[RMDB]
An RNA of 207 nucleotides, treated with 2A3 and DMS and read out base by base. DMS adducts were read by reverse transcription with MarathonRT. The data come from the RNA Mapping Database (RMDB), library OK3TST.
RNA sequence: GGGAACGACUCGAGUAGAGUCGAAAAGAAGAGUCAAACGUAAUGUGGAAUAUCUUAUAAAACUGAUGAUGAGCAUGUCAGGCAUUGAUUGUAUAAAAUAUCCCACAGGGCAGCUUAUCACCCAUGGAAGAGUGAGUGCAAAACAUAACGAUGGGAAACUUUUACAGAAGUUCGCUUCUGUAAAAGUAAAAGAAACAACAACAACAAC
Reactivity to 2A3 in 0.01 (KOAc 150mM, MgCl2 10mM, bicine 150mM(pH8.5), 24C), signal-to-noise 4, nucleotides 027 to 156: g050a030a020g020a010g020u040c030a060a070a090c090g060u110a130a050u080g020u050g020g010a020a020u040a030u050c020u040u070a090u080a170a100a040a040c060u070g010a030u020g020a020u020g010a040g030c040a070u080g030u040c020a010g030g050c030a020u040u100g080a090u110u090g090u040a040u050a070a060a010a000u070a030u040c020c010c000a010c030a000g020g030g000c010a010g000c020u050u030a000u140c010a060c010c020c000a040u050g060g020a060a040g050a030g050u060g010a020g020u030g020c050a040a000a070a070c030a050u140a070a050c040g050a040u060g010g010g000a040a060
Reactivity to DMS in 0.01 (KOAc 150mM, MgCl2 10mM, bicine 150mM(pH8.5), 24C), signal-to-noise 2, nucleotides 027 to 156: g030a110a120g000a070g010u000c040a080a090a110c080g030u000a070a170u010g030u020g010g020a040a060u000a040u000c020u020u010a060u000a050a040a020a040c020u020g010a030u000g000a060u000g000a070g060c110a130u010g010u000c030a030g000g030c020a020u000u010g010a030u000u000g020u000a060u010a040a040a020a020u000a060u000c000c020c010a020c010a080g000g020g060c040a100g000c050u010u000a060u000c010a060c030c000c010a090u010g020g010a080a100g020a100g010u000g010a090g000u000g030c040a040a050a070a150c050a080u000a060a040c080g010a100u000g000g000g010a120a130